Source: RMDB library OK2TST, as collected in RNAgym. Chemical mapping of a 177-nucleotide RNA with DMS and 2A3. For 2A3, 15,152 sequencing reads were counted.
RNA sequence: GGGAACGACUCGAGUAGAGUCGAAAAACGAGGUUGUAUAAGAAUUUUACCUACGACCACGAACCGGAGUGUGUGGCCUCAUCUCCGACGCAGUUCUAUUGGUAUCGCACCACAUUGCAGUGCUCGAUGAUUAAUCAUCAUUCGUGAUGAUUAAUCAAAAAGAAACAACAACAACAAC
Reactivity to DMS in 0.01 (KOAc 150mM, MgCl2 10mM, bicine 150mM(pH8.5), 24C), signal-to-noise 9, nucleotides 027 to 126: a130c050g010a090g010g010u000u000g010u000a060u010a100a100g020a130a120u010u010u000u000a080c110c080u000a050c070g010a050c020c010a130c050g000a110a100c100c030g010g000a050g020u010g010u000g020u000g010g000c040c040u000c040a070u000c020u000c040c020g010a120c120g010c090a060g010u000u000c040u000a120u000u000g000g010u000a050u000c110g010c120a070c050c030a050c140a070u000u010g020c070a080g010u000g010c020u000c060g000a200
Reactivity to 2A3 in 0.01 (KOAc 150mM, MgCl2 10mM, bicine 150mM(pH8.5), 24C), signal-to-noise 9, nucleotides 027 to 126: a000c030g020a020g030g020u040u040g060u080a150u070a300a100g140a290a200u110u150u140u160a060c010c000u020a060c020g030a010c010c020a010c040g020a030a030c030c020g000g030a040g020u110g000u020g030u060g070g030c000c020u030c020a050u020c010u000c000c010g040a040c040g000c030a020g020u070u030c040u080a120u110u110g040g000u050a060u150c060g010c030a030c030c010a030c020a090u030u200g020c050a020g020u020g070c020u020c040g070a060